[RMDB]
RNA sequence: GGGAACGACUCGAGUAGAGUCGAAAAGCAUCGUCUUCGGACGAUGCAAAAAGAUAUGGAACCUCGAUUCCAUGGCGUUGAAAUCGCUUCGGAAACGAAGCGAUGGAGCCAUGGAUCGAGGGUUCCUAAGUCAAAAAGACUAGCUUCGGCUAGUCAACCUGAGAUUCUAGUUCGCUAGAAUCUCAGGAAAAGAAACAACAACAACAAC
Reactivity to DMS in 0.01 (KOAc 150mM, MgCl2 10mM, bicine 150mM(pH8.5), 24C), signal-to-noise 2, nucleotides 027 to 156: g020c000a000u020c040g000u000c010u000u020c250g100g010a080c000g060a010u020g020c020a000a000a060a080a120g000a150u000a180u000g000g030a070a110c000c000u000c030g000a040u010u000c010c000a020u000g000g000c020g000u010u000g030a120a210a040u000c000g050c000u000u010c000g050g000a200a160a300c000g010a040a030g000c030g010a010u000g000g000a300g010c000c000a040u000g010g000a000u000c000g020a070g040g000g000u030u010c010c010u010a080a080g010u010c130a040a130a160a210a180g010a030c000u000a030g020c010u000u010c300g110g060c020u000a030g010u000c000a010a020
Reactivity to 2A3 in 0.01 (KOAc 150mM, MgCl2 10mM, bicine 150mM(pH8.5), 24C), signal-to-noise 2, nucleotides 027 to 156: g000c010a000u000c010g030u000c000u050u070c200g090g000a000c000g000a010u000g000c000a010a000a010a010a000g020a020u050a020u060g000g000a000a000c000c000u000c000g020a030u300u130c000c000a000u000g000g000c020g140u220u050g010a010a020a000u000c010g000c000u000u000c000g020g040a080a080a080c010g010a000a010g000c000g000a000u000g020g000a010g000c000c010a000u000g000g000a000u000c010g000a000g000g000g010u000u000c000c000u010a040a000g040u030c040a000a020a030a090a050g030a000c010u030a000g020c000u030u050c290g000g000c000u000a000g000u030c000a000a020
This 207-nucleotide RNA was probed chemically with DMS and 2A3. Source: RMDB library RNAMAK, as collected in RNAgym. For DMS the reverse transcriptase was MarathonRT. The reactions ran in a buffer of 150 mM KOAc, 10 mM MgCl2 and 150 mM bicine (pH 8.5), at 24 C.